[RMDB]
RNA sequence: GGGAACGACUCGAGUAGAGUCGAAAAAACGGCCUGAGACUGGCUGGCGCCGUUACCGGAAGCCUCUUUAACCCGGACAAUCACAACGCGCGGGCUGCACUGAUCGGAAAUGGCUUUGAGGGCUUUGUAAAGUGACCCGGUUUUACCUGCCUUGCCGUAUAUUCUGGGUUUUCGAACCCAGAAUAUAAAAAGAAACAACAACAACAAC
Reactivity to DMS in 0.01 (KOAc 150mM, MgCl2 10mM, bicine 150mM(pH8.5), 24C), signal-to-noise 1, nucleotides 027 to 156: a020a060c020g050g000c020c030u000g010a140g050a050c050u000g010g000c070u010g000g010c060g040c050c110g030u010u000a050c030c020g000g000a120a100g020c050c020u020c080u010u000u000a110a190c070c000c020g030g000a140c080a050a070u000c060a090c060a070a080c070g000c080g020c040g000g000g010c000u000g000c060a120c060u010g010a060u010c010g020g000a070a120a070u020g000g000c020u000u000u010g030a200g020g000g050c000u010u030u010g020u000a050a120a080g020u000g010a120c040c010c030g030g010u020u020u020u000a080c040c030u000g020c000c020u000u030g030c010c020g030
Reactivity to 2A3 in 0.01 (KOAc 150mM, MgCl2 10mM, bicine 150mM(pH8.5), 24C), signal-to-noise 1, nucleotides 027 to 156: a030a010c030g020g000c050c030u100g000a040g000a080c050u080g030g030c010u010g000g000c020g000c000c030g030u040u050a070c000c000g050g010a050a040g020c030c030u120c070u040u200u090a060a060c000c000c000g030g010a070c070a040a090u160c080a080c020a100a070c030g030c010g000c010g030g020g000c020u050g000c020a050c050u010g020a130u040c040g080g010a030a100a140u080g020g010c020u130u090u050g080a090g010g000g020c010u100u130u100g090u130a080a060a070g020u050g000a030c000c000c000g000g010u040u090u030u070a050c010c010u000g000c000c000u010u060g030c010c010g010